Description
Chemical mapping of a 207-nucleotide RNA with DMS and 2A3. For 2A3 the reverse transcriptase was SuperScript II with manganese. The RNA was probed in 150 mM KOAc, 10 mM MgCl2 and 150 mM bicine (pH 8.5) at 24 C. For DMS, 10,702 sequencing reads were counted.
RNA sequence: GGGAACGACUCGAGUAGAGUCGAAAAGUCACCGGACAGCCUUCAGGGUAAAAUGCAGAUCAUACUAGUGGGCCUUCUCUUGAUGAUAUUGAUCUCUUAGUAACUUACUGUGCCAACAUAUUCUUACCAAAGACCCCCUCGAAACAAGGGGAGAACAAAUAAAUCGUAUCUUCGGAUACGAUUUAUUAAAAGAAACAACAACAACAAC
Reactivity to DMS in 0.01 (KOAc 150mM, MgCl2 10mM, bicine 150mM(pH8.5), 24C), signal-to-noise 4, nucleotides 027 to 156: g000u010c040a110c010c010g020g010a120c070a100g010c020c020u000u000c060a100g010g020g000u010a030a050a080a100u000g010c030a090g020a080u000c040a140u000a060c060u000a070g030u010g000g010g020c050c020u000u000c030u000c030u000u010g020a100u000g010a100u000a090u000u000g010a060u000c010u000c040u000u010a070g020u010a070a060c050u000u000a050c060u000g000u000g010c030c030a050a080c030a070u000a080u000u000c030u010u010a060c020c030a040a070a170g010a160c050c000c010c010c030u000c020g010a130a080a090c070a040a050g010g030g010g010a080g010a040a070c070a050
Reactivity to 2A3 in 0.01 (KOAc 150mM, MgCl2 10mM, bicine 150mM(pH8.5), 24C), signal-to-noise 7, nucleotides 027 to 156: g040u020c020a010c080c040g020g030a040c030a020g020c010c010u090u090c090a050g040g010g030u080a050a070a040a040u110g020c040a020g030a060u060c020a020u050a120c050u080a040g060u080g010g010g010c010c000u100u040c030u010c000u050u060g050a060u040g040a030u070a090u140u100g060a060u010c020u000c000u070u050a030g020u080a130a060c020u040u110a040c030u060g030u050g090c020c020a030a030c020a070u120a080u080u080c040u060u070a100c030c020a080a090a030g040a100c020c010c010c030c000u020c040g120a090a070a030c040a040a010g030g010g040g010a080g020a020a020c060a030